[RMDB]
RNA sequence: GGGAACGACUCGAGUAGAGUCGAAAAGAUAUGGAUCGUCCUGAUGAGCUUGGAUUUAUCGGAAACGAUUGUCAGCUCGCAGGCGAUCCUAAGUCAAAACAACUCAGGCCUUCGGGCCUGAGUUGAAGGAGUGAGGAACGUUCGCGUUCCUCACUCCAAAAGAAACAACAACAACAAC
Reactivity to 2A3 in 0.01 (KOAc 150mM, MgCl2 10mM, bicine 150mM(pH8.5), 24C), signal-to-noise 1, nucleotides 027 to 126: g000a000u110a000u160g020g000a020u010c000g180u300c000c020u300g060a300u130g010a010g020c130u190u290g230g020a080u300u290u280a030u080c000g060g010a000a040a020c010g000a010u000u030g010u020c000a000g010c000u000c000g000c000a000g000g020c000g070a000u000c000c000u000a020a020g000u000c030a000a000a150a240c000a000a000c000u000c010a010g000g000c010c060u200u300c300g030g030g000c000c010u000g010a000g010u000u000g010a000a000